[RMDB]
RNA sequence: GGGAACGACUCGAGUAGAGUCGAAAAUUGAAGAACUGCUUUGUUCUCUUAAACUUACAUACAAGCAAAUUUAUGAUGUAGUAGCAUCACUCUGCACUUCUGCUUUUACUAUUAUGGACUACAAACCUGUAUUUGUAGUUUCAUCUAAUAGUGUUAAGAGUGAAGAGCAUUUCGAUGCUCUUCACUCAAAAGAAACAACAACAACAAC
Reactivity to 2A3 in 0.01 (KOAc 150mM, MgCl2 10mM, bicine 150mM(pH8.5), 24C), signal-to-noise 3, nucleotides 027 to 156: u080u100g050a060a050g010a080a020c020u030g030c040u270u110u140g000u010u030c030u000c000u070u080a100a110a100c020u070u120a040c060a080u140a110c060a040a070g060c040a090a110a130u190u300u110a140u250g050a040u010g020u040a120g010u060a020g040c000a020u030c000a050c030u010c080u080g060c070a040c080u070u050c020u050g040c000u110u070u080u080a020c000u010a000u010u000a010u000g010g020a000c000u000a000c000a010a020a020c050c130u200g050u300a170u000u000u020g000u000a000g000u000u020u090c000a000u000c020u000a000a020u020a020g020u030g060u100u100a100a050

Structure probing data (2A3) for a 207-nucleotide construct. Values are in units of 0.01, from 0 to 300, in steps of 10. 2A3 adducts were read by reverse transcription with SuperScript II with manganese. Conditions: 150 mM KOAc, 10 mM MgCl2 and 150 mM bicine (pH 8.5), 24 C.